[RMDB]
RNA sequence: GGGAACGACUCGAGUAGAGUCGAAAAUACGCCAAUUUCGAUUGGCGUAACACGCAAACCGGCCGAAAGGCAUUUUUUGCGUACGGUGGCGAAAGCCUAAAAACGCACUGUCAUUCGUGACAGUGAACCCCGUCAUGAAGUUCGCUUCAUGACGGGGAAAAGAAACAACAACAACAAC
Reactivity to 2A3 in 0.01 (KOAc 150mM, MgCl2 10mM, bicine 150mM(pH8.5), 24C), signal-to-noise 2, nucleotides 027 to 126: u030a010c000g030c000c010a010a000u050u080u090c210g110a030u010u000g000g030c000g000u000a000a010c020a000c000g000c020a020a000a040c040c030g050g000c010c000g050a050a010a000g010g000c000a000u070u030u010u000u010u040g030c000g000u000a070c100g190g050u060g040g000c030g040a110a010a020g000c000c020u060a050a040a050a010a010c120g020c030a010c000u000g000u000c000a030u030u020c140g100u030g000a000c010a000g000u000g000a000a020
Reactivity to DMS in 0.01 (KOAc 150mM, MgCl2 10mM, bicine 150mM(pH8.5), 24C), signal-to-noise 2, nucleotides 027 to 126: u000a010c000g010c000c000a020a010u000u010u010c160g010a010u000u000g000g010c000g010u000a010a130c130a030c000g010c000a000a020a010c300c300g030g000c000c000g000a090a090a130g010g000c020a000u000u000u010u000u030u000g020c000g000u000a060c190g040g020u010g070g000c000g040a050a040a230g000c000c010u000a000a010a040a080a080c300g000c010a020c010u020g000u000c000a030u000u000c180g010u000g010a010c020a000g000u000g000a090a100
An RNA of 177 nucleotides, treated with 2A3 and DMS and read out base by base. 2A3 adducts were read by reverse transcription with SuperScript II with manganese. DMS adducts were read by reverse transcription with MarathonRT. The RNA was probed in 150 mM KOAc, 10 mM MgCl2 and 150 mM bicine (pH 8.5) at 24 C. For 2A3, 2,551 sequencing reads were counted.